[RMDB]
RNA sequence: GGGAACGACUCGAGUAGAGUCGAAAAUGAGCACUUUGUUUACAGUCAUAGACGUGUUCCGUAGGUUGCAGGCAUCUACUUCUACCGAAGGCCUUGAUACAUCGAUCCUGACGGUUCGCGACCGAUCCACUGGAUGACACUUCGGUGUCAUCCAGUGAAAAGAAACAACAACAACAAC
Reactivity to 2A3 in 0.01 (KOAc 150mM, MgCl2 10mM, bicine 150mM(pH8.5), 24C), signal-to-noise 2, nucleotides 027 to 126: u080g010a000g040c060a020c040u060u070u060g050u030u130u140a100c080a060g060u040c040a100u040a100g030a070c020g010u010g020u040u000c030c030g020u020a030g000g000u010u060g070c050a020g020g040c000a050u030c000u110a100c000u070u000c040u100a170c040c070g030a020a010g040g090c000c000u040u050g000a030u010a120c060a080u080c040g040a050u050c010c030u030g100a040c000g000g010u010u040c010g000c030g060a050c000c030g010a020u010c030
Reactivity to DMS in 0.01 (KOAc 150mM, MgCl2 10mM, bicine 150mM(pH8.5), 24C), signal-to-noise 3, nucleotides 027 to 126: u010g010a100g010c070a030c070u000u010u000g000u010u000u000a090c130a100g000u000c090a090u000a080g000a120c040g000u010g000u000u000c020c100g020u000a040g000g020u010u000g000c110a140g020g000c070a070u010c070u010a150c050u000u000c020u010a060c270c170g000a040a090g000g000c130c120u000u000g000a070u010a030c150a060u010c020g000a040u000c030c020u010g030a050c020g000g000u010u000c070g020c060g020a140c070c040g010a100u010c060